[RMDB]
RNA sequence: GGGAACGACUCGAGUAGAGUCGAAAAGAUAUGGAUCUCUAGGGAGCUGUUGGAUUCGGAAACGAAUUUAUUAGCUUUGAUCUAGAGAGUCCUAAGUCAAAGCCAGCGAACUUCGGUUCGCUGGCAACUAAAGAUACGUCUUCGGACGUAUCUUUAGAAAAGAAACAACAACAACAAC
Reactivity to DMS in 0.01 (KOAc 150mM, MgCl2 10mM, bicine 150mM(pH8.5), 24C), signal-to-noise 2, nucleotides 027 to 126: g000a020u000a020u010g000g010a150u000c010u000c010u000a010g010g000g000a000g040c000u000g010u010u000g000g000a010u000u000c010g020g000a010a000a030c000g000a030a000u000u000u000a020u010u000a020g020c000u010u010u010g000a020u010c000u000a000g000a010g000a020g020u000c000c000u000a010a080g000u000c000a100a130a160g010c000c000a000g000c000g000a010a010c000u000u020c240g020g000u000u000c000g020c000u000g000g010c010a000a010